[RMDB]
RNA sequence: GGGAACGACUCGAGUAGAGUCGAAAAGCUUUCUUUCUUCCAUUGACCCACUGCUCGAGGACGUCCUCCCUGUCUCCUCGGUUCUUCUUCGAUCCGGACCGGCUCAUCUCGGCAAAGGGCGGCAGUCAUACGCUCCCGUUCGCGGGAGCGAAAAGAAACAACAACAACAAC
Reactivity to DMS in 0.01 (KOAc 150mM, MgCl2 10mM, bicine 150mM(pH8.5), 24C), signal-to-noise 2, nucleotides 027 to 129: g010c000u010u140u090c080u040u110u020c070u060u050c110c120a200u040u030g020a020c030c010c060a090c000u030g020c020u010c030g050a010g010g060a100c030g130u010c030c000u010c050c060c080u000g000u030c020u000c070c020u030c030g010g070u060u010c010u050u040c050u040u060c080g120a160u010c000c040g030g080a100c090c000g090g000c040u020c050a130u000c030u000c010g020g090c050a080a010a220g080g000g000c000g000g080c090a030g050u010c050a110u030a080
Reactivity to 2A3 in 0.01 (KOAc 150mM, MgCl2 10mM, bicine 150mM(pH8.5), 24C), signal-to-noise 3, nucleotides 027 to 129: g010c040u130u200u040c000u020u240u030c010u140u000c010c090a160u010u050g000a000c010c020c000a070c100u000g000c010u000c000g010a010g010g050a100c000g000u010c020c000u090c000c020c000u040g020u040c000u010c000c000u010c010g000g010u020u010c000u100u000c000u070u010c090g060a060u000c020c010g000g000a030c000c000g000g000c020u000c020a080u030c060u040c060g020g000c040a080a060a110g010g000g000c000g000g000c000a000g010u020c010a070u090a090